This 177-nucleotide RNA was probed chemically with DMS and 2A3. For DMS the reverse transcriptase was MarathonRT. Reactivities are given for positions 27 through 126. The RNA was probed in 150 mM KOAc, 10 mM MgCl2 and 150 mM bicine (pH 8.5) at 24 C. For DMS, 104,696 sequencing reads were counted. For 2A3 the reverse transcriptase was SuperScript II with manganese. For 2A3, 99,471 sequencing reads were counted.
RNA sequence: GGGAACGACUCGAGUAGAGUCGAAAAGCGGGCUCCAGUGCAUUUUAUUUGGGGGCCCCAAGUGGAUAGAAUGCAACUGGAACCAUGAGUGUCGAGGCGGCGAGCUCGUUGAGCUUCACUUGGCGGAGCGGCUGUGUGUAUUCGUGUGCGUAGCUGCAAAAGAAACAACAACAACAAC
Reactivity to DMS in 0.01 (KOAc 150mM, MgCl2 10mM, bicine 150mM(pH8.5), 24C), signal-to-noise 9, nucleotides 027 to 126: g020c080g010g000g010c050u000c000c000a010g010u000g000c010a010u000u000u000u000a010u000u000u010g010g010g010g010g010c050c020c010c020a020a060g020u030g010g000a030u010a010g000a010a010u000g010c000a040a060c010u000g000g000a030a070c020c010a090u020g010a090g010u020g010u010c050g000a110g000g000c050g010g000c080g010a070g010c020u000c030g010u030u020g010a080g010c040u010u010c070a070c050u010u010g010g010c040g000g000a110
Reactivity to 2A3 in 0.01 (KOAc 150mM, MgCl2 10mM, bicine 150mM(pH8.5), 24C), signal-to-noise 9, nucleotides 027 to 126: g080c050g010g000g010c020u000c000c000a000g000u010g000c000a010u000u010u020u030a060u030u070u060g050g000g010g060g020c000c000c000c010a090a040g090u090g110g020a010u000a030g020a010a000u010g000c030a120a140c040u000g000g000a010a010c010c000a070u150g050a030g080u120g030u070c030g020a040g020g070c040g020g010c050g030a020g010c010u010c030g150u060u160g030a010g000c000u040u040c020a040c030u020u050g030g000c030g020g020a050